Conditions: 150 mM KOAc, 10 mM MgCl2 and 150 mM bicine (pH 8.5), 24 C. An RNA of 177 nucleotides, treated with 2A3 and DMS and read out base by base. It was measured as part of the RMDB library 15KREP. DMS adducts were read by reverse transcription with MarathonRT.
RNA sequence: GGGAACGACUCGAGUAGAGUCGAAAACGUAGGCAUAAUUGGAAUUGUGUGGAUUGUGACACUGCAGGUGUGGGGAAUACCUUCAUCUGUGAAGAAGUCGCAAAUGACCUCACUACCGCCCUACGCAGUCCUCACUUAACUUCGGUUAAGUGAGGACAAAAGAAACAACAACAACAAC
Reactivity to 2A3 in 0.01 (KOAc 150mM, MgCl2 10mM, bicine 150mM(pH8.5), 24C), signal-to-noise 2, nucleotides 027 to 126: c010g000u000a000g010g030c090a110u060a220a110u240u240g000g070a110a110u150u060g000u000g000u010g000g050a050u010u020g000u010g020a000c010a000c080u050g020c020a010g000g020u010g000u000g000g000g010g020a020a130u150a260c000c000u000u000c000a010u010c000u000g020u040g020a020a040g010a060a020g000u000c010g000c010a000a040a040u140g130a080c000c000u030c020a010c010u020a020c000c020g000c000c000c000u000a000c010g040c000a010
Reactivity to DMS in 0.01 (KOAc 150mM, MgCl2 10mM, bicine 150mM(pH8.5), 24C), signal-to-noise 1, nucleotides 027 to 126: c000g000u010a020g010g030c130a130u000a120a060u020u020g000g010a240a100u000u010g030u020g000u000g000g000a210u000u000g060u000g010a030c020a100c080u000g010c000a010g010g040u000g010u000g000g010g000g000a210a040u000a230c000c000u000u000c000a000u000c010u000g000u000g000a070a060g010a070a260g000u000c000g030c010a010a000a080u000g000a070c010c010u000c000a020c040u000a300c020c020g020c140c010c010u010a010c000g030c070a130